Annotation:
Structure probing data (DMS) for a 177-nucleotide construct.
[RMDB]
RNA sequence: GGGAACGACUCGAGUAGAGUCGAAAACCAUGUUCGAAUCCAUCCCUUCCCCCCGAGUGUCGCCCAGGAAUGGCGGGACCCCACUCAACUGGGGUCCGCGUUCCAUCCUUUCUUACCUGAUGGCCGGCCAUUAGCACCUGUUCGCAGGUGCUAAUGGAAAAGAAACAACAACAACAAC
Reactivity to DMS in 0.01 (KOAc 150mM, MgCl2 10mM, bicine 150mM(pH8.5), 24C), signal-to-noise 1, nucleotides 027 to 126: c010c050a090u000g000u000u010c050g010a090a070u010c050c060a100u000c020c000c000u010u000c010c010c000c000c050c030g010a060g030u000g000u010c040g000c040c000c020a070g010g020a040a000u010g000g020c010g000g010g000a030c010c020c000c000a000c070u000c300a080a090c200u000g010g000g000g000u020c010c000g020c020g030u000u000c030c010a120u010c090c030u010u000u010c030u010u010a100c040c040u000g000a060u000g000g000c070c080g040g000
It was measured as part of the RMDB library VIROID. Conditions: 150 mM KOAc, 10 mM MgCl2 and 150 mM bicine (pH 8.5), 24 C.